RNA sequence: GGGAACGACUCGAGUAGAGUCGAAAAGGAUAACAUCGAUAUGGAGCCUAAGAGGCUUGGAUUUAUGGGAAUCUCGGAAACGAGGUUUCCCAUUGUCAGCCUUAUGGCUCCUAAGUCAACAGAACAACAUAUGCGUUAGCUUCGGCUAACGCAUAUGAAAAGAAACAACAACAACAAC
Reactivity to 2A3 in 0.01 (KOAc 150mM, MgCl2 10mM, bicine 150mM(pH8.5), 24C), signal-to-noise 1, nucleotides 027 to 126: g040g010a110u130a300a050c030a300u300c110g010a000u060a060u300g020g010a000g040c020c050u150a260a110g060a010g050g000c010u040u060g100g060a030u030u300u300a030u040g000g020g030a020a000u000c010u000c000g000g040a020a040a050c050g000a020g030g050u040u060u060c000c010c000a000u000u000g010u010c020a000g010c010c010u000u000a060u080g000g010c010u000c010c000u000a000a000g000u020c020a100a000c050a120g190a180a120c060a070a010
Reactivity to DMS in 0.01 (KOAc 150mM, MgCl2 10mM, bicine 150mM(pH8.5), 24C), signal-to-noise 4, nucleotides 027 to 126: g000g010a110u000a100a090c110a180u010c070g000a050u000a300u010g000g000a020g020c000c000u000a080a140g000a010g000g000c000u000u020g010g010a010u000u010u010a000u000g010g000g000a030a000u000c000u000c000g010g010a110a070a220c000g010a000g010g000u000u000u000c000c000c000a000u000u000g010u000c010a030g000c010c000u000u000a300u010g010g000c010u000c000c000u000a010a080g010u000c060a070a070c120a110g000a100a090c130a100a150

Notes:
The record gives the reactivity of an RNA of 177 nucleotides to 2A3 and DMS. The RNA was probed in 150 mM KOAc, 10 mM MgCl2 and 150 mM bicine (pH 8.5) at 24 C. For 2A3, 1,175 sequencing reads were counted. The data come from the RNA Mapping Database (RMDB), library TTRDEL. 2A3 adducts were read by reverse transcription with SuperScript II with manganese.